[RMDB]
RNA sequence: GGGAACGACUCGAGUAGAGUCGAAAAUCCGCAGUUCGCUGCGGAAAAAAGGGGUCACAAGUGGGACAUGAACACUAACUGAAGCCUCCACGGUUAGGUUCAACAGCCGUAACAUCUUGUGACGGAGGCACCCAAAAAACCGAUAUUCGUAUCGGAAUAACUUCUAUUUCUUCGGAAAUAGAAGUUAAAAAGAAACAACAACAACAAC
Reactivity to 2A3 in 0.01 (KOAc 150mM, MgCl2 10mM, bicine 150mM(pH8.5), 24C), signal-to-noise 4, nucleotides 027 to 156: u000c000c000g010c000a010g010u050u190c230g030c130u030g010c000g000g000a070a000a010a000a000a010g100g010g030g000u010c010a010c000a000a010g010u060g020g140g120a080c120a210u130g010a040a030c170a070c300u000a000a000c000u000g010a070a000g000c010c000u000c010c000a000c000g000g000u000u000a000g020g000u000u010c020a130a150c060a110g190c100c100g120u140a050a030c010a040u140c000u000u000g000u000g000a000c000g000g000a000g010g000c010a030c000c000c000a020a140a050a000a010a010c010c000g000a010u010a030u050u170c250g040u040a010u010c000g000g030a010a020
Reactivity to DMS in 0.01 (KOAc 150mM, MgCl2 10mM, bicine 150mM(pH8.5), 24C), signal-to-noise 2, nucleotides 027 to 156: u000c010c020g080c020a050g040u010u010c300g040c000u020g000c000g030g000a000a010a010a040a100a090g030g030g010g020u000c020a010c000a020a010g020u000g000g000g030a100c090a200u010g000a020a020c010a120c000u000a040a050c010u010g000a050a160g020c020c000u000c010c010a300c020g040g000u000u010a010g000g030u000u020c020a090a090c130a250g000c090c070g010u000a070a050c050a080u000c070u010u000g010u000g010a040c010g020g020a050g040g060c040a120c020c000c000a000a050a080a090a120a110c000c010g010a030u010a090u000u000c270g010u000a020u010c020g000g000a160a150

Chemical mapping of a 207-nucleotide RNA with 2A3 and DMS. The 2A3 profile rests on 3,770 reads. Conditions: 150 mM KOAc, 10 mM MgCl2 and 150 mM bicine (pH 8.5), 24 C. Reactivities are rounded to 0.1 and cut off at 0 and 3. DMS adducts were read by reverse transcription with MarathonRT.